[RMDB]
The record gives the reactivity of an RNA of 207 nucleotides to DMS and 2A3. For DMS the reverse transcriptase was MarathonRT. It was measured as part of the RMDB library OK3TST. For DMS, 2,943 sequencing reads were counted. In probing experiments dimethyl sulfate is read out at A N1 and C N3, which are open when not base-paired.
RNA sequence: GGGAACGACUCGAGUAGAGUCGAAAAUAUUUAACCAUACUGAUGGAUUUAAGAACUUCUACCUAUUGUGAUGUUCUUAAAGUGUGAUCAGAUGUAUAUACUAUGAGAGGCAGCAUAACGUAGUGAUGAUGAGCACAGACUUUGAAAGUAGACUGUCGUACUGAGCAAGUUUCGACUUGCUCAGUACAAAAGAAACAACAACAACAAC
Reactivity to DMS in 0.01 (KOAc 150mM, MgCl2 10mM, bicine 150mM(pH8.5), 24C), signal-to-noise 2, nucleotides 027 to 156: u000a060u010u010u000a050a220c050c020a070u000a100c000u000g010a050u020g030g010a300u000u000u000a040a020g000a010a010c000u000u000c020u020a090c090c230u000a180u020u000g020u000g000a060u000g000u000u000c050u000u000a010a020a090g000u010g020u000g010a070u000c040a050g010a120u000g000u000a160u000a150u000a030c070u010a080u020g010a090g000a140g010g010c030a040g030c050a090u000a050a180c080g010u000a090g020u000g010a060u010g030a050u000g010a120g030c020a050c040a050g000a070c060u010u000u000g000a070a010a180g000u000a080g020a090c040u040g000u000c050
Reactivity to 2A3 in 0.01 (KOAc 150mM, MgCl2 10mM, bicine 150mM(pH8.5), 24C), signal-to-noise 4, nucleotides 027 to 156: u100a030u050u140u090a070a050c050c000a000u070a160c040u010g010a020u030g000g100a020u020u000u010a010a010g000a000a000c010u060u060c030u110a090c070c030u180a250u240u210g040u010g010a010u010g000u000u000c000u000u010a010a010a010g110u160g050u080g080a040u020c010a030g000a020u010g040u000a030u020a010u010a100c050u010a060u130g030a040g000a020g100g000c020a010g000c020a050u060a120a100c090g050u080a040g030u050g020a030u040g010a010u040g000a000g000c040a020c010a050g050a060c040u100u040u100g050a080a040a010g020u030a050g040a070c010u020g030u070c040